[RMDB]
RNA sequence: GGGAACGACUCGAGUAGAGUCGAAAAGAUAUGGAGUUCACUGGAGCUCUUCGGAAACGAAAGAGCGAUGAAAGUGAAACUCCUAAGUCAAAAGGCCAAAUCUUCUGUUCGCAGAAGAUUUGGCCAAGAAUAAGACUGUGUUCGCACAGUCUUAUUCAAAAGAAACAACAACAACAAC
Reactivity to DMS in 0.01 (KOAc 150mM, MgCl2 10mM, bicine 150mM(pH8.5), 24C), signal-to-noise 4, nucleotides 027 to 126: g000a030u010a300u010g000g000a020g010u000u000c000a000c000u000g010g010a080g020c000u000c000u010u000c010g000g020a120a110a210c010g000a010a030a050g000a010g020c000g000a070u000g010a090a160a010g000u010g000a060a020a030c000u000c000c000u000a010a060g010u010c030a060a050a130a120g000g000c000c000a010a010a000u000c000u000u010c000u000g010u000u010c200g020c000a020g010a020a010g010a010u000u020u000g010g010c020c000a000a010
Reactivity to 2A3 in 0.01 (KOAc 150mM, MgCl2 10mM, bicine 150mM(pH8.5), 24C), signal-to-noise 1, nucleotides 027 to 126: g040a010u090a030u180g000g020a000g000u000u020c000a000c010u030g010g000a030g000c010u000c000u000u000c030g040g040a110a070a000c020g060a100a140a290g030a030g030c040g060a300u010g000a010a030a000g000u030g010a160a020a010c000u000c000c000u020a070a000g040u000c030a000a030a110a140g040g000c000c000a030a010a010u000c020u010u040c030u020g140u120u110c300g110c120a000g030a000a000g000a000u000u000u000g000g050c000c000a000a010
The record gives the reactivity of an RNA of 177 nucleotides to DMS and 2A3. 2A3 adducts were read by reverse transcription with SuperScript II with manganese. The reactions ran in a buffer of 150 mM KOAc, 10 mM MgCl2 and 150 mM bicine (pH 8.5), at 24 C. The data come from the RNA Mapping Database (RMDB), library TTRDEL. For DMS, 4,583 sequencing reads were counted. High DMS reactivity at an A or C suggests that its Watson-Crick edge is free. The 2A3 profile rests on 2,703 reads.